[RMDB]
RNA sequence: GGGAACGACUCGAGUAGAGUCGAAAACGCUGCAGGUGGCAGCAGCCCUGAAGGAUGCUCUCAUGGCCCAGGGUUGGAAGGGACCCAACAAGGGCGUGCUCUGAGAAGGGGGGGGAUCCCAUCCGCAAUGAUACAGGCGGUUCGCCGCCUGUAUCAUAAAAGAAACAACAACAACAAC
Reactivity to DMS in 0.01 (KOAc 150mM, MgCl2 10mM, bicine 150mM(pH8.5), 24C), signal-to-noise 1, nucleotides 027 to 126: c210g000c030u010g000c020a190g010g030u010g040g040c040a020g040c020a100g040c010c010c000u020g000a170a160g030g000a070u000g000c050u010c020u000c060a110u000g010g010c010c010c010a070g010g010g050u010u020g020g010a160a160g040g010g000a050c160c000c000a080a090c130a120a160g040g010g010c020g000u000g000c060u000c040u000g000a090g030a210a130g000g000g000g000g000g000g000g000a160u000c010c020c010a100u030c100c010g040c180a220

Conditions: 150 mM KOAc, 10 mM MgCl2 and 150 mM bicine (pH 8.5), 24 C. Chemical mapping of a 177-nucleotide RNA with DMS. Values cover nucleotides 27 to 126. DMS adducts were read by reverse transcription with MarathonRT.